Overview
The record gives the reactivity of an RNA of 177 nucleotides to DMS and 2A3. The RNA was probed in 150 mM KOAc, 10 mM MgCl2 and 150 mM bicine (pH 8.5) at 24 C. Reactivities are given for positions 27 through 126. DMS adducts were read by reverse transcription with MarathonRT. For 2A3 the reverse transcriptase was SuperScript II with manganese.
[RMDB]
RNA sequence: GGGAACGACUCGAGUAGAGUCGAAAAGUUGUACUACAAGGGACAGGUUUUACCGCUUAGCUAAUGAGUGUGCUCAAGUGCUAAGUGAAUAUGUUCUGUGCGGUGGUGGUUACUACGUUAAACCUGGCUCACCGAUAUGUUUCGACAUAUCGGUGAGAAAAGAAACAACAACAACAAC
Reactivity to DMS in 0.01 (KOAc 150mM, MgCl2 10mM, bicine 150mM(pH8.5), 24C), signal-to-noise 4, nucleotides 027 to 126: g020u000u000g010u010a060c040u000a070c130a110a130g000g000g010a030c020a050g010g000u000u000u010u000a050c200c020g030c010u000u000a010g020c010u000a300a160u010g000a020g030u010g030u000g040c030u000c010a010a090g000u000g010c000u000a000a020g010u000g000a080a150u010a050u000g000u000u000c010u010g000u010g020c040g010g000u000g000g010u000g020g010u020u000a040c070u000a050c090g000u000u000a050a050a130c050c020u000g020g010
Reactivity to 2A3 in 0.01 (KOAc 150mM, MgCl2 10mM, bicine 150mM(pH8.5), 24C), signal-to-noise 2, nucleotides 027 to 126: g020u050u080g000u070a060c020u030a000c050a030a080g080g000g020a000c000a020g000g090u040u070u170u060a050c020c000g000c000u000u000a000g060c020u020a050a080u070g000a010g020u280g050u220g170c010u030c010a030a020g050u010g040c020u020a010a000g000u000g020a010a010u190a100u170g090u110u070c030u010g020u060g090c060g000g070u110g060g000u010g000g020u000u040a020c040u020a030c000g020u040u090a030a040a050c000c010u000g070g000